[RMDB]
RNA sequence: GGGAACGACUCGAGUAGAGUCGAAAAUGUCUUCAUCGUCAUCACAAAUUUCUUCAAACUUAAAUAUCUUAAGGACCUUCAACGGACUUGAUAAUAGAGAUUAACGAACUUUGUGAUGACAACGAAGGCCCUACCGGUGAUUCGUCACCGGUAGGGCAAAAGAAACAACAACAACAAC
Reactivity to 2A3 in 0.01 (KOAc 150mM, MgCl2 10mM, bicine 150mM(pH8.5), 24C), signal-to-noise 1, nucleotides 027 to 126: u150g060u000c000u000u020c000a120u050c030g000u000c000a000u000c000a000c000a000a010a000u040u000u000c000u030u040c070a090a070a110c030u000u020a080a100a000u050a070u040c030u070u110a000a020g140g060a300c000c000u040u060c210a040a050c160g020g010a000c000u010u010g000a000u000a030a070u120a020g130a020g050a090u030u100a000a080c170g000a000a000c000u000u010u010g000u000g000a010u000g000a010c000a000a000c010g000a000a000g000

Overview
The record gives the reactivity of an RNA of 177 nucleotides to 2A3. The reactions ran in a buffer of 150 mM KOAc, 10 mM MgCl2 and 150 mM bicine (pH 8.5), at 24 C. For 2A3 the reverse transcriptase was SuperScript II with manganese. Source: RMDB library RFM100, as collected in RNAgym. Values cover nucleotides 27 to 126.